[RMDB]
RNA sequence: GGGAACGACUCGAGUAGAGUCGAAAAUUGCAUGUCGGUAGGCAUACCGUAAUCCUGCCAGCUUAAAUUAAACGCAAACAACAAAAAUUACGCUCCAGCUUACGCAAAAGUAGCGUAGGUUUAUCUCUGUUUUGGAGCCGAUCUUUUUGCCAUAUCUCGAUUCGUUAGACUUCGGUCUAACGAAUCGAAAAGAAACAACAACAACAAC
Reactivity to 2A3 in 0.01 (KOAc 150mM, MgCl2 10mM, bicine 150mM(pH8.5), 24C), signal-to-noise 1, nucleotides 027 to 156: u170u020g180c050a040u180g000u150c040g040g000u000a030g000g000c070a060u020a120c010c010g060u020a000a010u060c030c000u030g050c050c050a030g000c000u050u120a000a140a180u210u300a140a050a000c080g020c050a030a020a020c000a050a030c000a000a010a040a000a130u160u160a000c000g010c000u000c000c000a000g000c000u030u000a000c010g000c010a280a000a000a140g100u170a120g020c000g000u000a000g000g000u000u150u090a040u050c140u000c050u180g300u230u070u240u070g010g000a010g000c000c000g010a060u070c030u020u080u000u000u000g050c040c010a110u080a190u190c090u060